[RMDB]
RNA sequence: GGGAACGACUCGAGUAGAGUCGAAAAACAAAUUGGACGACCUGUAUCCAGUUGUCACUGCCAAAGCGAACUUUGAUGAGGUCCUUGUGCCAGCCGAUCAUGUGUCAAGGAGUCCCAAUGACACCUACACCUGCACGUGAUUCGUCACGUGCAGGUGAAAAGAAACAACAACAACAAC
Reactivity to DMS in 0.01 (KOAc 150mM, MgCl2 10mM, bicine 150mM(pH8.5), 24C), signal-to-noise 1, nucleotides 027 to 126: a140c120a020a040a150u050u000g030g020a090c070g000a110c160c070u000g010u000a300u010c010c150a030g000u000u020g000u010c080a090c030u030g020c060c000a030a080a080g010c030g010a050a050c050u000u010u010g010a080u010g000a130g000g000u010c020c160u000u000g010u020g000c060c040a070g000c020c000g000a090u010c120a110u030g010u010g030u000c000a090a180g010g010a100g040u010c000c000c070a080a150u000g000a050c040a050c050c170u010a170
Reactivity to 2A3 in 0.01 (KOAc 150mM, MgCl2 10mM, bicine 150mM(pH8.5), 24C), signal-to-noise 1, nucleotides 027 to 126: a000c050a030a030a090u090u080g060g000a020c060g080a030c020c020u090g050u140a070u020c010c020a020g020u020u020g040u110c020a060c130u030g050c030c070a090a050a000g090c040g090a080a000c010u050u080u220g060a070u100g020a020g060g040u030c000c000u030u090g040u040g070c000c050a040g000c010c020g000a040u060c060a030u090g040u030g000u040c000a020a060g040g010a100g090u000c000c040c050a030a070u090g000a000c000a000c000c000u090a040